[RMDB]
RNA sequence: GGGAACGACUCGAGUAGAGUCGAAAAUUCGCGCUCCAGCUUCCGCUCGUAAGACGGGGAUAACGCGGAGUCAAACCAAAACGAGAUCGUGUGGAAGCCACCGUUUGAGGAUCGAAGCACUAAAUUGAAUCAAACUAGCUUAAGUUUAGCGUGUCUGGUAUUUAGGAAACUUCGGUUUCCUAAAUACAAAAGAAACAACAACAACAAC
Reactivity to 2A3 in 0.01 (KOAc 150mM, MgCl2 10mM, bicine 150mM(pH8.5), 24C), signal-to-noise 3, nucleotides 027 to 156: u040u020c000g000c000g010c010u020c020c040a060g030c020u020u010c010c020g010c050u030c000g030u050a050a050g030a100c050g010g000g000g040a040u060a130a030c030g010c000g030g000a010g060u030c060a070a050a170c050c010a100a060a000a050c020g010a020g020a060u050c040g020u040g000u050g080g050a010a010g030c020c010a060c040c050g010u000u020u070g040a010g010g010a030u080c040g020a030a000g040c020a010c080u090a010a060a060u190u230g020a030a030u050c010a020a020a050c010u080a040g070c030u080u130a200a000g090u190u060u160a030g070c070g030u040g040u030c020u010g000
Reactivity to DMS in 0.01 (KOAc 150mM, MgCl2 10mM, bicine 150mM(pH8.5), 24C), signal-to-noise 1, nucleotides 027 to 156: u000u000c000g000c060g030c020u000c030c030a130g020c020u010u010c020c040g000c040u000c040g000u030a130a170g010a170c030g000g000g040g030a070u000a050a020c050g010c030g000g000a060g010u000c100a060a100a230c000c030a000a060a090a100c040g010a170g030a060u020c020g020u000g030u010g030g020a170a130g000c000c020a080c060c020g000u000u010u000g000a100g010g010a160u010c030g000a170a190g030c030a030c020u000a030a070a120u000u000g020a120a120u000c040a070a070a070c040u000a100g010c110u000u000a080a110g010u010u000u000a060g020c060g060u000g000u010c050u000g000
Overview:
Chemical mapping of a 207-nucleotide RNA with 2A3 and DMS. Conditions: 150 mM KOAc, 10 mM MgCl2 and 150 mM bicine (pH 8.5), 24 C. The DMS profile rests on 2,470 reads. The 2A3 profile rests on 1,558 reads. Reactivities are given for positions 27 through 156. The data come from the RNA Mapping Database (RMDB), library ARCHII. For 2A3 the reverse transcriptase was SuperScript II with manganese.